This 177-nucleotide RNA was probed chemically with DMS. It was measured as part of the RMDB library TTRINS. DMS adducts were read by reverse transcription with MarathonRT. Values are in units of 0.01, from 0 to 300, in steps of 10. The reactions ran in a buffer of 150 mM KOAc, 10 mM MgCl2 and 150 mM bicine (pH 8.5), at 24 C.
RNA sequence: GGGAACGACUCGAGUAGAGUCGAAAAGAUAUGGACUACUCAGCUUUUGACGUACUUCAACCCUCCUCUUAUCGGAAACGAUAAACGUGAGGAGGGUUGAAGUACGAUAAGCUGGUAGUCCUAAGUCCGAAUUAAGAAACUUCGGUUUCUUAAUUCGAAAAGAAACAACAACAACAAC
Reactivity to DMS in 0.01 (KOAc 150mM, MgCl2 10mM, bicine 150mM(pH8.5), 24C), signal-to-noise 3, nucleotides 027 to 126: g010a120u010a300u000g010g000a010c000u000a000c000u010c010a000g010c010u000u000u010u020g020a250c160g010u000a000c000u010u000c000a010a000c000c000c010u000c010c020u010c000u000u000a010u000c010g010g000a150a100a220c010g000a000u000a010a050a190c300g010u010g000a010g010g010a020g000g010g010u000u010g000a000a000g010u000a000c000g000a050u000a010a010g030c000u010g010g010u000a010g000u000c000c000u000a010a120g000u000c070